[RMDB]
RNA sequence: GGGAACGACUCGAGUAGAGUCGAAAAGUGUAGCGUCACUUUGAUGGCGGUACUAUGAAUUUAUGCAAGGUGUGGAGCGACCUUAAACAGUUCUGGUGGUGCUCUGAAUGGAGUGCUCUACUGAGAUUUAACUUAUGCACGUUCGCGUGCAUAAGAACACUAAUAAUCCGUUCGCGGAUUAUUAGUGAAAAGAAACAACAACAACAAC
Reactivity to 2A3 in 0.01 (KOAc 150mM, MgCl2 10mM, bicine 150mM(pH8.5), 24C), signal-to-noise 9, nucleotides 027 to 156: g090u060g000u020a030g090c010g010u010c000a020c080u190u150u260g220a300u080g050g000c010g010g070u010a010c020u020a060u110g070a100a110u110u210u090a120u150g090c070a050a030g010g000u020g010u090g020g010a010g000c010g000a010c000c000u090u160a070a070a010c030a060g000u020u010c020u020g030g010u030g010g010u010g000c000u010c020u080g160a110a070u280g020g010a010g000u020g020c020u010c020u060a080c040u080g070a040g050a230u070u140u160a070a020c000u000u000a000u000g010c000a010c000g020u020u030c100g030c000g100u000g000c000a000u000a000a000g000a010a000
Reactivity to DMS in 0.01 (KOAc 150mM, MgCl2 10mM, bicine 150mM(pH8.5), 24C), signal-to-noise 3, nucleotides 027 to 156: g010u010g000u000a030g000c010g030u000c000a000c010u000u010u000g010a100u000g010g020c010g010g020u000a020c020u000a090u010g010a090a120u010u000u010a070u020g030c130a090a050g000g020u000g000u010g020g000a110g020c030g010a100c020c010u000u010a040a060a080c080a110g010u010u000c000u000g000g030u010g010g010u000g010c010u000c020u000g020a130a160u000g010g010a080g020u000g010c010u000c020u010a080c050u000g000a170g010a180u000u000u000a060a170c000u010u000a010u000g020c000a010c000g030u010u010c270g040c020g010u000g010c010a010u000a000a020g010a060a180